[RMDB]
RNA sequence: GGGAACGACUCGAGUAGAGUCGAAAAGCUCCGUAUUAUUUGAAGGUGGGUGUCCAGAGCCACUCAGAAACUGAAUUGAGAAAUACAGAGUGAUUUUUUGAGGGCAGAAUUCAUUUCAUUGGGGAACAAUAUGCAGAAAGUUCGCUUUCUGCAUAUUAAAAGAAACAACAACAACAAC
Reactivity to DMS in 0.01 (KOAc 150mM, MgCl2 10mM, bicine 150mM(pH8.5), 24C), signal-to-noise 4, nucleotides 027 to 126: g000c050u000c020c030g010u010a090u000u000a100u000u000u000g010a100a080g010g020u000g010g000g020u000g000u000c070c080a110g010a160g020c060c030a070c020u000c020a060g010a040a060a080c050u000g010a090a070u000u000g000a150g000a130a050a030u000a060c030a060g010a140g020u000g000a030u000u010u000u000u000u000g020a040g000g000g010c050a100g000a070a050u000u010c050a050u000u000u000c040a070u000u000g010g000g000g000a080a080c160
Reactivity to 2A3 in 0.01 (KOAc 150mM, MgCl2 10mM, bicine 150mM(pH8.5), 24C), signal-to-noise 2, nucleotides 027 to 126: g030c000u020c010c010g050u140a060u160u030a010u080u290u120g060a060a000g050g000u050g000g040g040u080g100u020c050c020a010g020a000g050c020c010a070c030u010c020a010g070a080a070a020c040u070g050a080a020u110u100g020a100g020a060a060a010u080a050c030a000g040a020g150u080g130a130u060u000u010u030u120u080g020a030g000g050g000c010a000g050a030a010u100u100c010a020u020u080u060c010a020u050u110g000g000g000g030a060a000c030